[RMDB]
RNA sequence: GGGAACGACUCGAGUAGAGUCGAAAAUGCAUUUCUGAGACUUCAACUGAACAAGUUGACGUUUCUCAUGAGACUUCUGACGACGAGUGGGCUGCUGCAGUUGAUGAAGCGUUCCCUCUCGAUGAAGGUCCCUAUAUGAGUUCGCUCAUAUAGGGACAAAAGAAACAACAACAACAAC
Reactivity to 2A3 in 0.01 (KOAc 150mM, MgCl2 10mM, bicine 150mM(pH8.5), 24C), signal-to-noise 1, nucleotides 027 to 126: u100g000c050a040u090u090u000c020u030g000a000g030a010c010u000u000c010a010a020c010u060g090a100a030c080a250a030g000u020u000g000a000c010g010u030u140u030c010u000c000a030u120g010a020g020a060c000u010u000c020u040g080a080c040g010a000c040g000a000g000u080g000g010g000c020u140g000c000u010g000c020a080g020u200u150g120a220u030g020a040a000g000c000g010u030u030c000c000c000u000c000u010c020g040a020u040g000a020a050g100
Reactivity to DMS in 0.01 (KOAc 150mM, MgCl2 10mM, bicine 150mM(pH8.5), 24C), signal-to-noise 2, nucleotides 027 to 126: u030g000c130a080u000u010u000c030u000g000a010g010a010c000u000u010c000a020a010c020u000g010a120a090c260a150a020g000u000u000g010a030c050g010u000u000u000c010u000c040a000u000g000a040g000a250c020u000u000c040u000g000a210c300g010a050c090g010a010g030u000g060g000g000c200u020g030c010u000g000c000a060g000u010u000g000a100u000g000a050a050g030c010g000u000u000c000c040c000u000c030u010c020g020a130u010g010a060a050g030
The record gives the reactivity of an RNA of 177 nucleotides to 2A3 and DMS. For DMS the reverse transcriptase was MarathonRT. Reactivities are given for positions 27 through 126. 2A3 adducts were read by reverse transcription with SuperScript II with manganese.